[RMDB]
Background:
Structure probing data (2A3 and DMS) for a 207-nucleotide construct. Conditions: 150 mM KOAc, 10 mM MgCl2 and 150 mM bicine (pH 8.5), 24 C. High 2A3 reactivity points to a flexible backbone, as in loops and unpaired stretches. The DMS profile rests on 4,392 reads. DMS adducts were read by reverse transcription with MarathonRT.
RNA sequence: GGGAACGACUCGAGUAGAGUCGAAAAUGACAAACUGGAACAGAACUUUCAAAAGCUAUUUGAAAAACUACCAGACACUUGUAAGUCGGAGUGCAAAUCCUUGUAUGAAGACAUCAGAAAUUCUGAUAACCAUGCAUCUGCAUGGAAGUCAGCACUGCAUUCUAUAUGACUUCGGUCAUAUAGAAUGAAAAGAAACAACAACAACAAC
Reactivity to 2A3 in 0.01 (KOAc 150mM, MgCl2 10mM, bicine 150mM(pH8.5), 24C), signal-to-noise 8, nucleotides 027 to 156: u140g020a020c010a020a150a060c030u030g020g010a100a040c040a090g050a080a050c040u030u040u020c040a040a050a040a070g100c110u210a220u190u050u050g020a020a020a000a040a040c020u040a040c000c010a020g070a050c030a060c120u120u120g040u150a110a100g000u020c010g010g020a020g010u010g000c000a000a030a160u140c070c100u030u020g010u020a020u070g020a020a010g020a010c010a040u070c020a040g110a090a090a050u200u040c000u010g000a010u010a020a040c000c000a010u010g000c000a170u090c190u300g000c000a000u000g000g000a000a000g010u000c000a000g010c040a020c060u050g000
Reactivity to DMS in 0.01 (KOAc 150mM, MgCl2 10mM, bicine 150mM(pH8.5), 24C), signal-to-noise 3, nucleotides 027 to 156: u020g030a180c040a040a100a160c050u000g020g000a080a300c070a140g010a070a130c080u000u000u000c050a010a080a080a170g020c140u000a120u000u000u000g000a050a040a070a070a100c090u000a090c040c000a060g000a140c050a060c080u000u000g000u000a040a120g020u010c010g000g000a260g000u000g000c030a010a050a100u010c100c080u000u000g030u000a070u010g000a180a150g010a110c030a090u000c050a060g010a060a070a140u000u010c020u000g000a020u000a010a300c010c000a040u000g020c010a300u010c190u000g010c010a010u000g010g010a010a240g000u000c020a030g000c130a090c070u000g010